Notes
Structure probing data (DMS and 2A3) for a 177-nucleotide construct. Conditions: 150 mM KOAc, 10 mM MgCl2 and 150 mM bicine (pH 8.5), 24 C. The data come from the RNA Mapping Database (RMDB), library OK2TRN. For DMS, 20,201 sequencing reads were counted. For 2A3, 23,074 sequencing reads were counted.
[RMDB]
RNA sequence: GGGAACGACUCGAGUAGAGUCGAAAAUACGUAGCAUAUUAGCCGUAAUUAGCGCAUUAAUGCUAAUAUGCAUAUGCAUUAAUUAGCUAUACGUACGUAGCGCGCCGAUCGCGCGUAGCAUCGCGGCGACUAGCCGCAUUUUCGAAUGCGGCUAGUCAAAAGAAACAACAACAACAAC
Reactivity to DMS in 0.01 (KOAc 150mM, MgCl2 10mM, bicine 150mM(pH8.5), 24C), signal-to-noise 9, nucleotides 027 to 126: u000a010c010g020u000a040g020c050a080u000a060u010u000a060g010c030c160g020u000a030a040u000u000a030g020c080g020c100a040u000u010a080a030u000g000c000u010a120a120u010a070u010g010c080a050u000a050u000g010c000a020u000u000a020a030u000u010a160g000c000u000a050u000a040c120g010u000a020c030g010u000a070g010c020g020c020g020c030c120g010a100u010c150g010c010g010c020g010u000a060g010c110a090u000c080g010c060g000g010c180
Reactivity to 2A3 in 0.01 (KOAc 150mM, MgCl2 10mM, bicine 150mM(pH8.5), 24C), signal-to-noise 9, nucleotides 027 to 126: u030a000c010g020u010a020g120c060a060u060a080u220u100a060g000c020c030g050u030a030a060u040u040a020g050c030g000c060a010u020u090a080a020u060g000c010u030a100a100u180a170u270g000c020a010u050a020u110g000c000a000u010u070a040a040u040u050a050g000c010u030a020u010a090c050g040u000a010c010g010u010a020g010c020g000c000g020c040c060g110a150u170c070g000c000g010c000g030u020a010g020c020a070u120c060g020c030g140g000c040